[RMDB]
RNA sequence: GGGAACGACUCGAGUAGAGUCGAAAAUCCGGUGAGCCGUGCCAUGGAAUCGGGAGCUCCAAGUGGGCCAUUUUUGGUAAGCAGAACUGGCGAUGCGGGAUGAACCGGAAGCCGGGUUACGGUGCCAUCUUUUAGGCCCAUUCGUGGGCCUAAAAGAAAAAGAAACAACAACAACAAC
Reactivity to 2A3 in 0.01 (KOAc 150mM, MgCl2 10mM, bicine 150mM(pH8.5), 24C), signal-to-noise 3, nucleotides 027 to 126: u040c010c020g000g010u060g080a030g000c000c010g010u000g020c020c000a260u210g020g040a000a090u150c030g000g000g020a020g120c020u010c000c000a050a150g000u070g020g020g010c010c000a040u000u000u010u010u000g170g030u140a180a050g210c010a000g010a000a000c000u000g000g000c000g070a110u050g030c020g010g000g040a050u060g050a040a090c000c000g030g020a010a000g000c000c000g000g000g000u060u150a010c000g010g000u030g030c030c000a040
Reactivity to DMS in 0.01 (KOAc 150mM, MgCl2 10mM, bicine 150mM(pH8.5), 24C), signal-to-noise 2, nucleotides 027 to 126: u010c010c040g000g000u000g000a300g040c010c000g020u000g000c020c000a010u010g010g010a100a080u040c020g000g010g010a200g000c160u000c010c000a060a080g000u000g000g000g000c000c000a000u000u030u010u000u040g000g000u020a110a150g050c080a030g020a060a000c040u010g000g000c010g000a230u010g000c040g030g000g020a110u040g000a070a170c030c000g010g000a120a090g000c010c000g000g000g000u000u020a050c030g000g000u000g000c070c020a110